[RMDB]
RNA sequence: GGGAACGACUCGAGUAGAGUCGAAAAGCUCACGCCUCUAAUCCCAGCACUUUAGGAGGCCGAGGCGGGAGGAUCGCUUGAGCCCAAGAAGAUCAUGGUUGCCGUGAUCCAUGAUCAUACCACGGCAGCCCCUCUUAACUUUCGAGUUAAGAGGGGCAAAAGAAACAACAACAACAAC
Reactivity to DMS in 0.01 (KOAc 150mM, MgCl2 10mM, bicine 150mM(pH8.5), 24C), signal-to-noise 3, nucleotides 027 to 126: g000c020u000c030a060c030g000c040c000u000c030u000a300a110u000c010c000c140a110g020c230a040c250u000u000u000a070g000g040a030g020g010c230c080g000a040g000g010c020g010g000g010a040g000g000a030u000c080g030c000u010u010g010a190g000c000c020c010a120a140g000a160a100g000a060u010c010a030u000g000g010u010u000g010c020c040g020u000g000a060u010c020c020a020u030g000a110u000c070a090u010a060c120c030a050c080g020g000c080a130
Reactivity to 2A3 in 0.01 (KOAc 150mM, MgCl2 10mM, bicine 150mM(pH8.5), 24C), signal-to-noise 2, nucleotides 027 to 126: g010c010u000c000a040c020g000c030c000u010c020u040a030a020u010c000c000c030a070g110c110a130c110u220u180u230a040g000g010a000g000g020c010c030g020a020g000g000c060g000g010g010a020g000g000a100u130c060g020c050u030u070g040a030g010c040c000c020a000a060g080a020a010g040a050u130c020a020u050g060g000u090u070g050c040c010g010u040g030a050u020c020c020a020u070g000a020u080c020a000u060a020c060c050a020c000g050g000c010a020
Record summary:
The data come from the RNA Mapping Database (RMDB), library OK2TRN. Structure probing data (DMS and 2A3) for a 177-nucleotide construct. Values cover nucleotides 27 to 126. The RNA was probed in 150 mM KOAc, 10 mM MgCl2 and 150 mM bicine (pH 8.5) at 24 C. For DMS, 1,833 sequencing reads were counted.